Chemical mapping of a 177-nucleotide RNA with 2A3 and DMS. The RNA was probed in 150 mM KOAc, 10 mM MgCl2 and 150 mM bicine (pH 8.5) at 24 C. 2A3 adducts were read by reverse transcription with SuperScript II with manganese. Source: RMDB library OK1LIB, as collected in RNAgym.

[RMDB]
RNA sequence: GGGAACGACUCGAGUAGAGUCGAAAAACAUAGCAGAGACACACAGAGGAAAGCACUAGAGAAAGCGUCUGCCAUGUAGUCGCUGUACGCGAGAUGCAAGCGCGUCAUUACGAGACGUCGUACGCUGAGAUAUAUAGAUAUUCGUAUCUAUAUAUCUAAAAGAAACAACAACAACAAC
Reactivity to 2A3 in 0.01 (KOAc 150mM, MgCl2 10mM, bicine 150mM(pH8.5), 24C), signal-to-noise 9, nucleotides 027 to 126: a000c060a030u100a020g030c020a000g020a010g030a040c010a010c010a000c020a080g070a040g050g100a080a060a010g030c030a040c070u080a040g020a010g040a200a100a010g020c010g040u020c030u030g020c030c010a060u110g030u080a050g040u030c020g000c060u050g050u110a040c080g020c020g040a050g010a080u130g030c030a060a100g020c010g000c000g020u010c010a050u060u260a070c130g050a050g010a110c020g010u170c030g020u050a020c060g000c040u040g020
Reactivity to DMS in 0.01 (KOAc 150mM, MgCl2 10mM, bicine 150mM(pH8.5), 24C), signal-to-noise 9, nucleotides 027 to 126: a080c070a060u020a070g010c030a040g000a070g010a070c060a070c120a100c110a080g010a120g010g000a080a070a090g010c060a080c070u010a070g000a110g000a070a060a050g000c030g010u000c030u010g000c030c060a080u020g010u000a030g000u000c020g000c020u000g010u010a040c110g010c040g000a060g000a080u020g010c040a070a260g000c030g010c010g000u000c010a060u030u040a100c270g010a130g010a020c030g000u030c030g010u010a030c300g000c020u000g000